[RMDB]
RNA sequence: GGGAACGACUCGAGUAGAGUCGAAAACGGCAUGGUCCCAGCCUCCUCGCUGGCGCCGGCUGGGCAACAUUCCGAGGGGACCGUCCCCUCGGUAAUGGCGAAUGGGACCCACAAACCUCUCUAGAUUAUCCUCACAAGUUCGCUUGUGAGAAAAGAAACAACAACAACAAC
Reactivity to 2A3 in 0.01 (KOAc 150mM, MgCl2 10mM, bicine 150mM(pH8.5), 24C), signal-to-noise 9, nucleotides 027 to 129: c030g020g000c040a060u120g030g010u060c010c010c000a000g020c000c000u050c000c000u060c050g060c050u020g030g000c020g010c020c000g000g010c040u090g010g010g000c010a020a020c000a030u020u010c010c010g000a000g010g010g000g020a050c030c030g290u300c020c000c000c000u000c000g010g000u010a000a010u010g030g000c050g070a060a050u120g010g010g050a070c000c000c000a060c120a010a040a010c000c000u010c000u000c010u020a020g000a050u060u070a040u160c010
Reactivity to DMS in 0.01 (KOAc 150mM, MgCl2 10mM, bicine 150mM(pH8.5), 24C), signal-to-noise 5, nucleotides 027 to 129: c120g060g020c020a100u040g000g020u040c110c000c000a110g030c000c000u020c000c000u030c130g020c000u020g010g040c070g040c000c000g000g040c050u060g050g000g050c070a180a090c040a000u000u030c000c020g020a060g000g000g000g000a260c190c150g070u090c010c010c010c000u050c000g000g000u000a010a030u010g000g000c110g050a090a080u000g010g000g000a140c060c000c040a070c120a160a100a040c000c000u010c030u000c030u020a080g020a040u020u040a040u050c100